An RNA of 177 nucleotides, treated with DMS and 2A3 and read out base by base.
For 2A3 the reverse transcriptase was SuperScript II with manganese.
It was measured as part of the RMDB library M2PK50.
For DMS, 1,155 sequencing reads were counted.
The reactions ran in a buffer of 150 mM KOAc, 10 mM MgCl2 and 150 mM bicine (pH 8.5), at 24 C.
[RMDB]
RNA sequence: GGGAACGACUCGAGUAGAGUCGAAAAGCUACUUUCUUCGGAAAGUAGCAAAUAAGAUAUGAGCCAAUAAGGACGGAAAAAGGCUCAAAAUCCGCUCCUAAAAAAGCUCCAGGUUCGCCUGGAGCAAGAUACACUCUAGGUUCGCCUAGAGUGUAUCAAAAGAAACAACAACAACAAC
Reactivity to DMS in 0.01 (KOAc 150mM, MgCl2 10mM, bicine 150mM(pH8.5), 24C), signal-to-noise 2, nucleotides 027 to 126: g010c020u000a010c000u000u000u030c000u000u020c160g000g000a010a010a020g030u010a000g000c000a000a050a020u000a100a100g000a010u000a120u020g000a000g010c000c010a030a160u000a080a150g000g000a090c120g000g000a030a030a090a150a110g000g000c040u000c000a010a010a160a120u000c000c050g010c190u000c000c000u000a000a140a160a120a140a070g000c000u000c000c000a030g010g030u000u000c230g000c000c010u000g000g010a000g010c010a000a010
Reactivity to 2A3 in 0.01 (KOAc 150mM, MgCl2 10mM, bicine 150mM(pH8.5), 24C), signal-to-noise 1, nucleotides 027 to 126: g000c000u000a000c000u000u010u020c000u010u020c110g080g000a000a000a000g010u000a000g000c000a000a000a010u020a020a000g000a000u030a030u090g010a000g020c000c010a020a020u140a170a110g140g040a040c080g060g010a060a040a060a010a090g010g000c010u020c060a020a010a000a070u010c000c010g020c090u010c000c040u140a150a140a070a050a010a030g000c010u000c000c000a010g050g070u050u060c190g070c070c020u000g010g000a000g000c000a010a000